[RMDB]
RNA sequence: GGGAACGACUCGAGUAGAGUCGAAAAGUGGAUAGUUUCGACUAUCCACACAACUGAUGAUCUUACAGUGGAGGUUGAAGAAGAUGGCCAUCGGAUCCUCAAAUAGCACAGAGUUCGCUCUGUGCAAAGUAAACCUAUGGUUCGCCAUAGGUUUACUAAAAGAAACAACAACAACAAC
Reactivity to 2A3 in 0.01 (KOAc 150mM, MgCl2 10mM, bicine 150mM(pH8.5), 24C), signal-to-noise 4, nucleotides 027 to 126: g000u000g000g010a000u000a000g000u010u070u100c190g020a010c000u000a010u000c000c000a000c000a000c000a000a010c020u050g020a040u040g010a030u040c020u060u140a090c050a100g030u090g090g060a060g060g050u110u120g060a110a060g020a040a010g030a090u090g040g050c000c020a030u020c010g020g030a020u020c000c010u040c020a080a110a150u170a030g000c010a000c000a000g000a010g010u030u080c150g050c070u000c000u010g000u000g000c000a020a000
Reactivity to DMS in 0.01 (KOAc 150mM, MgCl2 10mM, bicine 150mM(pH8.5), 24C), signal-to-noise 6, nucleotides 027 to 126: g020u000g010g000a010u010a010g010u000u000u010c180g010a050c000u000a000u000c000c000a000c000a030c180a080a100c050u000g010a060u000g000a060u000c020u000u000a090c070a080g010u010g010g010a080g000g000u000u010g010a110a120g000a070a110g000a060u000g010g020c080c010a060u010c050g010g000a090u010c010c020u000c120a070a070a090u010a110g000c000a000c000a010g000a020g030u000u010c190g010c010u000c000u010g010u000g010c000a010a020
Chemical mapping of a 177-nucleotide RNA with 2A3 and DMS. 2A3 adducts were read by reverse transcription with SuperScript II with manganese. Reactivities are given for positions 27 through 126.